[RMDB]
RNA sequence: GGGAACGACUCGAGUAGAGUCGAAAAAUUUGGAUGGGACGCCAGCAUCGAUCCGGGCCCUGCCCGCGGUCUCGGCGGCGGUCGGCGAUCAGGUCGAAGUGUUGCUCGACGGCGGCAUCCGGCGGGGCUCUUACAUUCAAUUCGUUGAAUGUAAGAGAAAAGAAACAACAACAACAAC
Reactivity to DMS in 0.01 (KOAc 150mM, MgCl2 10mM, bicine 150mM(pH8.5), 24C), signal-to-noise 7, nucleotides 027 to 126: a110u000u010u010g020g000a050u010g000g000g010a070c060g010c030c020a080g010c070a070u000c070g010a070u010c030c040g010g000g000c020c080c060u000g010c050c010c060g020c060g020g010u000c020u000c100g010g010c020g010g010c030g010g010u000c020g000g010c040g010a100u010c160a120g010g000u000c020g010a050a100g020u010g010u010u000g000c030u010c060g010a050c080g010g010c010g000g020c030a040u000c080c110g000g010c030g020g000g000g010
Reactivity to 2A3 in 0.01 (KOAc 150mM, MgCl2 10mM, bicine 150mM(pH8.5), 24C), signal-to-noise 4, nucleotides 027 to 126: a000u140u120u140g050g000a020u030g020g020g070a010c020g010c030c010a030g020c020a070u070c040g040a050u020c030c000g010g040g000c020c040c070u070g010c010c030c020g040c050g030g040u040c030u020c070g030g000c010g000g010c020g020g020u030c000g010g030c030g080a160u180c100a070g120g070u020c010g010a050a070g100u060g030u130u070g020c040u050c140g050a040c040g050g000c010g060g070c000a020u030c000c020g000g000c010g000g000g000g000

Chemical mapping of a 177-nucleotide RNA with DMS and 2A3. Source: RMDB library OK2TRN, as collected in RNAgym. The DMS profile rests on 15,230 reads. The RNA was probed in 150 mM KOAc, 10 mM MgCl2 and 150 mM bicine (pH 8.5) at 24 C. For 2A3 the reverse transcriptase was SuperScript II with manganese.